Source: RMDB library OK3TST, as collected in RNAgym. An RNA of 207 nucleotides, treated with DMS and 2A3 and read out base by base. Reactivities are rounded to 0.1 and cut off at 0 and 3. For 2A3 the reverse transcriptase was SuperScript II with manganese. DMS adducts were read by reverse transcription with MarathonRT. For 2A3, 724 sequencing reads were counted.
RNA sequence: GGGAACGACUCGAGUAGAGUCGAAAAUCUGCUAAUAUUAUUUCCAUUUUACAUAUGAGGAAACUGAGAUACAGAGAGGCUUAAGUAAUUUGUCCAAAGUCAUAUGGUAUGUGAUGGUAGAGCUGAGAUGUGAAAACCAGCCUGUUUGACCAUCAAAACCCAUAGUGAGUUUCGACUCACUAUGGGUAAAAGAAACAACAACAACAAC
Reactivity to DMS in 0.01 (KOAc 150mM, MgCl2 10mM, bicine 150mM(pH8.5), 24C), signal-to-noise 1, nucleotides 027 to 156: u000c040u010g010c040u020a030a080u000a100u000u010a060u000u020u000c050c030a190u000u000u000u000a150c050a100u000a060u000g010a100g000g010a050a030a170c050u010g020a090g010a200u000a000c030a040g010a080g010a110g000g030c060u000u000a070a120g020u000a060a060u000u020u000g020u000c100c050a060a000a150g010u000c030a070u000a060u010g030g020u010a100u000g020u010g010a060u000g010g000u010a060g010a060g020c020u000g000a110g000a140u000g030u000g000a120a050a150a120c110c010a060g010c070c030u000g000u000u000u000g010a080c010c030a030u000c030a020a080a120
Reactivity to 2A3 in 0.01 (KOAc 150mM, MgCl2 10mM, bicine 150mM(pH8.5), 24C), signal-to-noise 2, nucleotides 027 to 156: u000c010u050g030c040u060a010a010u040a180u300u120a150u050u110u050c050c000a050u130u160u000u060a080c060a020u170a020u130g010a100g010g000a020a070a050c050u080g060a020g020a150u120a080c030a060g050a000g000a040g030g000c000u050u080a010a030g010u040a060a100u190u170u140g040u020c040c030a030a020a020g030u000c020a000u030a040u140g030g020u080a050u140g250u070g010a000u060g000g000u030a060g010a060g050c010u000g020a060g020a300u080g050u020g160a000a000a000a050c010c000a010g040c000c000u020g030u020u100u120g020a010c010c000a000u050c000a000a050a000